[RMDB]
RNA sequence: GGGAACGACUCGAGUAGAGUCGAAAACUGUGCUAAGACUCUGGCGCGUGCGGUGCAGGCCUAGCAGAGUCCGACAAACGCAGUACGCACCGCUAAACCUGUAGGCGCGCAGCACUCGCUCUUUAGGACGGGGGUUCGAUUCCCCCCAUCUCCACAACUCUAAAGCAUAGUUCGCUAUGCUUUAGAGAAAAGAAACAACAACAACAAC
Reactivity to DMS in 0.01 (KOAc 150mM, MgCl2 10mM, bicine 150mM(pH8.5), 24C), signal-to-noise 2, nucleotides 027 to 156: c040u000g020u010g010c030u010a100a090g010a020c030u000c030u000g050g010c040g030c070g060u000g020c000g010g030u000g060c020a090g050g010c050c060u020a090g000c040a060g010a080g020u000c030c040g010a140c100a070a090a080c130g010c050a130g020u020a100c050g000c020a030c010c000g000c030u000a050a080a090c050c030u000g000u000a150g000g000c040g000c020g040c020a110g030c040a080c050u000c070g000c060u000c060u030u000u010a130g030g030a100c020g020g010g000g040g000u000u010c050g000a300u010u010c050c000c000c000c000c020a050u000c040u010c010c030a070c100a000a190
Reactivity to 2A3 in 0.01 (KOAc 150mM, MgCl2 10mM, bicine 150mM(pH8.5), 24C), signal-to-noise 7, nucleotides 027 to 156: c020u020g010u020g040c020u090a080a030g020a060c030u010c040u080g030g000c010g000c020g020u050g010c020g000g030u020g000c030a090g050g140c030c030u050a030g040c020a020g020a020g060u030c050c050g100a050c110a040a140a020c080g030c070a020g030u080a050c060g000c030a020c020c000g000c030u080a130a100a080c020c020u080g120u180a070g030g050c010g000c010g000c030a000g000c000a010c020u050c040g040c020u080c030u120u140u150a050g020g020a020c040g020g000g000g000g000u030u060c030g040a070u070u110c000c000c000c000c000c000a070u020c020u020c030c010a030c020a070a080